[RMDB]
RNA sequence: GGGAACGACUCGAGUAGAGUCGAAAAUUGUCCGGGUUCGCCCGGACAAAGCGGGAGGCGACCGGAGGCCUCCUCCCAGGCGAUCCCUCGCCUCGCUCCGGAGCGUGAUGACCUUCGGGUCAUCAAAAGACAACCUAUAGUUCGCUAUAGGUUGUCUAAAAGAAACAACAACAACAAC
Reactivity to DMS in 0.01 (KOAc 150mM, MgCl2 10mM, bicine 150mM(pH8.5), 24C), signal-to-noise 2, nucleotides 027 to 126: u000u000g010u000c000c000g000g010g030u010u010c230g010c000c000c000g000g000a010c010a000a020a090g010c230g010g000g000a010g020g010c050g000a090c020c020g000g000a060g000g010c030c020u000c020c010u000c020c000c020a110g000g010c010g000a060u010c120c120c110u000c000g000c010c000u010c120g000c010u000c010c010g010g000a210g010c230g020u000g000a000u000g000a010c000c000u000u010c180g020g010g000u000c000a000u000c000a020a030a130
Reactivity to 2A3 in 0.01 (KOAc 150mM, MgCl2 10mM, bicine 150mM(pH8.5), 24C), signal-to-noise 1, nucleotides 027 to 126: u020u020g000u000c010c000g010g010g000u030u060c250g080c000c000c000g010g000a000c010a000a000a000g020c050g080g020g000a000g000g000c020g040a050c020c000g000g010a010g000g030c000c000u000c000c000u010c010c000c000a010g000g020c010g020a100u130c060c030c030u020c010g000c010c020u030c070g080c000u000c000c000g020g010a030g080c120g100u080g020a000u000g000a000c000c000u010u040c190g110g010g000u010c000a010u000c000a000a010a010

Structure probing data (DMS and 2A3) for a 177-nucleotide construct. DMS adducts were read by reverse transcription with MarathonRT. The RNA was probed in 150 mM KOAc, 10 mM MgCl2 and 150 mM bicine (pH 8.5) at 24 C. For 2A3, 3,016 sequencing reads were counted.